Structure probing data (DMS and 2A3) for a 177-nucleotide construct. The 2A3 profile rests on 1,187 reads. Source: RMDB libraries RFM100 and RFMREP, as collected in RNAgym.

RNA sequence: GGGAACGACUCGAGUAGAGUCGAAAAAUUGUCCGUGCAAUUUUUUCCGGUAUUGCAGUUACAUUGGCGAAGUCUGCCCAAAAAACUGUAUAACUAGAAAAAAUGAGAGAAGCAUGGAGUCACGCAAUCUUUACGACGUGUUCGCACGUCGUAAAGAAAAAGAAACAACAACAACAAC
Reactivity to DMS in 0.01 (KOAc 150mM, MgCl2 10mM, bicine 150mM(pH8.5), 24C), signal-to-noise 2, nucleotides 027 to 126: a090u010u040g010u000c010c000g020u000g000c020a100a000u000u010u000u000u000u000c000c010g000g050u030a110u020u000g010c000a020g010u000u000a090c190a300u000u010g000g000c000g030a150a140g030u090c190u020g040c100c000c060a000a050a200a100a040a010c000u030g000u000a000u000a130a010c000u000a080g000a000a000a020a040a000a000u000g020a150g000a070g050a080a090g010c030a040u000g000g000a060g000u020c050a060c090g000c150a140a060
Reactivity to 2A3 in 0.01 (KOAc 150mM, MgCl2 10mM, bicine 150mM(pH8.5), 24C), signal-to-noise 1, nucleotides 027 to 126: a000u110u130g020u040c000c030g000u010g000c010a030a040u000u000u000u000u000u000c000c010g020g000u050a160u120u040g040c010a000g000u000u020a050c020a160u050u000g010g000c020g020a160a030g140u110c150u180g000c020c020c000a010a100a000a000a000a000c000u000g010u010a000u010a060a020c010u020a000g030a010a010a000a000a000a010u130g000a120g040a020g000a180a100g010c000a010u010g000g090a020g060u110c020a020c090g060c070a000a160